The record gives the reactivity of an RNA of 207 nucleotides to 2A3. 2A3 adducts were read by reverse transcription with SuperScript II with manganese. The RNA was probed in 150 mM KOAc, 10 mM MgCl2 and 150 mM bicine (pH 8.5) at 24 C. Source: RMDB library OK3TST, as collected in RNAgym. For 2A3, 508 sequencing reads were counted.
RNA sequence: GGGAACGACUCGAGUAGAGUCGAAAACUGGGCUGUGAAGCGCUUCGGGCAGUUCGGGAUCGACGUCGCAGCGGAGAAAGCGAACGCGCUUUGUGACGUCUAUCUGGACGAGAAAACGGACGCCCUCAAGGACGGCGUAGACUGGGGCGCGGAGGGCGCCAGAGUACCACUUCGGUGGUACUCUGGCAAAAGAAACAACAACAACAAC
Reactivity to 2A3 in 0.01 (KOAc 150mM, MgCl2 10mM, bicine 150mM(pH8.5), 24C), signal-to-noise 1, nucleotides 027 to 156: c070u050g000g000g040c040u060g060u060g250a150a030g030c000g050c010u030u060c040g070g030g030c030a010g040u030u000c000g110g050g010a010u010c000g030a000c040g010u000c080g000c020a030g050c040g000g010a230g170a010a210a040g210c190g050a110a030c040g060c010g060c120u160u110u040g010u010g000a000c030g020u000c000u000a010u000c000u030g050g000a060c020g030a030g100a050a120a000a000c080g050g090a030c060g000c030c060c000u040c040a000a180g150g020a030c010g010g060c010g030u010a000g040a080c030u010g010g000g000g000c030g000c000g000g010a050g050g010g010c060